[RMDB]
RNA sequence: GGGAACGACUCGAGUAGAGUCGAAAAUGAACAGUAUAAGGCAUCUAGAUUCCUUCUCAGGUAGUUGAGCUAUGGACUAGGACUUUAUUUCACUUCUUUCCAGAUUUAAAAAGCAACAAUGACCAGAACUAUGAGCGGGGAGGCCAAGGACUGGAGACGAAAAUAAAUGAUUCGUCAUUUAUUUUCGAAAAGAAACAACAACAACAAC
Reactivity to DMS in 0.01 (KOAc 150mM, MgCl2 10mM, bicine 150mM(pH8.5), 24C), signal-to-noise 4, nucleotides 027 to 156: u010g000a060a080c080a120g020u010a040u000a030a080g010g040c020a090u000c010u000a100g010a170u000u000c010c020u000u010c020u000c020a070g000g020u010a130g010u010u000g000a060g010c130u000a040u010g040g030a150c040u000a040g010g010a040c020u000u000u000a050u000u000u010c050a090c050u000u000c050u000u000u010c030c010a160g010a160u010u010u000a030a040a040a070a090g020c040a030a080c040a040a090u000g000a080c020c020a110g010a080a070c060u000a080u000g000a090g030c060g010g000g010g010a090g030g010c030c030a040a080g010g010a120c020u000g000g000a160g020a150
Reactivity to 2A3 in 0.01 (KOAc 150mM, MgCl2 10mM, bicine 150mM(pH8.5), 24C), signal-to-noise 9, nucleotides 027 to 156: u130g000a050a030c040a060g060u070a050u020a090a020g020g010c060a110u030c050u030a040g020a200u100u110c010c000u060u020c020u010c020a100g120g090u240a080g100u150u050g020a010g010c100u100a110u170g020g000a020c010u010a010g010g020a010c000u060u070u060a070u040u160u070c040a030c030u030u020c000u040u060u010c020c010a020g030a100u040u140u300a080a160a040a020a000g070c040a010a060c020a070a130u140g030a070c010c040a020g010a070a030c030u070a080u280g020a030g040c020g010g010g020g010a020g040g000c020c010a020a010g030g010a010c020u030g010g010a020g030a020